An RNA of 207 nucleotides, treated with 2A3 and read out base by base. Values cover nucleotides 27 to 156. 2A3 adducts were read by reverse transcription with SuperScript II with manganese.

RNA sequence: GGGAACGACUCGAGUAGAGUCGAAAAUUCAGUAGUGAGACGUACGGAAACCAUCCAUGGCCAUCCGAAACGUACGGUAGGCAUAGUAACCGCACAAGCGCACGAGGUCGCGCGGAUUCUCAGAUCUUGCUGCUAGCUUCAUUAGCAUGUCCUGCUGUCCCCAUGUUCAAUUCGUUGAACAUGGGGAAAAAGAAACAACAACAACAAC
Reactivity to 2A3 in 0.01 (KOAc 150mM, MgCl2 10mM, bicine 150mM(pH8.5), 24C), signal-to-noise 2, nucleotides 027 to 156: u190u070c010a010g010u070a050g030u050g080a060g000a080c060g060u070a000c030g030g040a060a090a080c010c020a040u170c110c100a240u240g020g000c030c000a120u020c000c040g050a160a160a020c050g080u120a000c000g010g010u100a050g000g000c000a000u000a060g000u030a010a070c030c000g020c000a000c020a150a130g000c050g010c020a020c060g100a000g010g060u150c020g000c000g020c010g030g000a100u200u030c060u020c120a050g050a120u000c020u070u140g000c070u030g000c000u030a030g040c010u100u110c060a250u110u030a110g000c020a010u070g120u130c030c000u080g090c030u020g030
The reactions ran in a buffer of 150 mM KOAc, 10 mM MgCl2 and 150 mM bicine (pH 8.5), at 24 C. It was measured as part of the RMDB library OK3TST.